RNA sequence: GGGAACGACUCGAGUAGAGUCGAAAAGAUGGGCCUUCUGGUAAUGUACCUGGCCACCCAGGAGGUCCUGAGGAAGAGAUAGACGGCCAGGGUCCGAUCAUACGGUAUAAACCUGCUCAACGUAUGAUCGGUUAUGACAAUUAAGAAGAGCAGGUUACGGGCUAUUAGGAUUCGUCCUAAUAGCCCGAAAAGAAACAACAACAACAAC
Reactivity to 2A3 in 0.01 (KOAc 150mM, MgCl2 10mM, bicine 150mM(pH8.5), 24C), signal-to-noise 1, nucleotides 027 to 156: g100a070u080g000g000g000c000c000u000u020c030u040g050g030u140a110a080u250g050u110a080c000c000u000g000g010c000c000a000c000c000c000a000g000g000a000g000g000u040c000c010u020g030a020g020g090a080a040g050a030g030a050u120a170g140a080c050g000g050c000c000a000g000g010g000u010c000c000g000a000u000c000a000u000a000c070g000g040u120a030u080a100a240a060c000c000u000g000c000u000c020a000a000c000g000u010a000u010g000a000u000c000g000g000u030u000a000u030g020a000c000a000a010u180u100a300a050g050a080a000g000a000g050c000a000g000g000u000u030a000

Structure probing data (2A3) for a 207-nucleotide construct. The 2A3 profile rests on 680 reads. It was measured as part of the RMDB library OK3TST. 2A3 adducts were read by reverse transcription with SuperScript II with manganese. The reactions ran in a buffer of 150 mM KOAc, 10 mM MgCl2 and 150 mM bicine (pH 8.5), at 24 C.